[RMDB]
RNA sequence: GGGAACGACUCGAGUAGAGUCGAAAAGAAAGUGUGCACUUGAUACCGCGUGACUUCGGUCACGUAGUGGCACCGCGCAGGACUUUGCUGCUACUGCUUAGUCCUGUGGUAUCUUGUGCUCACGAAACGCACUAGCAGCAUUCGUGCUGCUAGUGCGAAAAGAAACAACAACAACAAC
Reactivity to 2A3 in 0.01 (KOAc 150mM, MgCl2 10mM, bicine 150mM(pH8.5), 24C), signal-to-noise 2, nucleotides 027 to 126: g060a000a200a060g010u010g000u000g010c000a000c000u000u020g000a000u000a000c000c000g020c000g000u000g000a000c000u020u040c230g090g000u010c020a000c030g000u000a010g010u020g060g080c140a070c210c000g000c000g000c000a030g010g000a000c000u000u100u020g010c020u000g040c060u140a190c130u130g000c000u000u010a000g000u000c000c000u000g000u000g020g000u020a010u010c000u000u010g000u000g000c000u000c000a000c010g050a060a010a000

Chemical mapping of a 177-nucleotide RNA with 2A3. The 2A3 profile rests on 1,436 reads. Reactivities are given for positions 27 through 126. Conditions: 150 mM KOAc, 10 mM MgCl2 and 150 mM bicine (pH 8.5), 24 C. 2A3 adducts were read by reverse transcription with SuperScript II with manganese.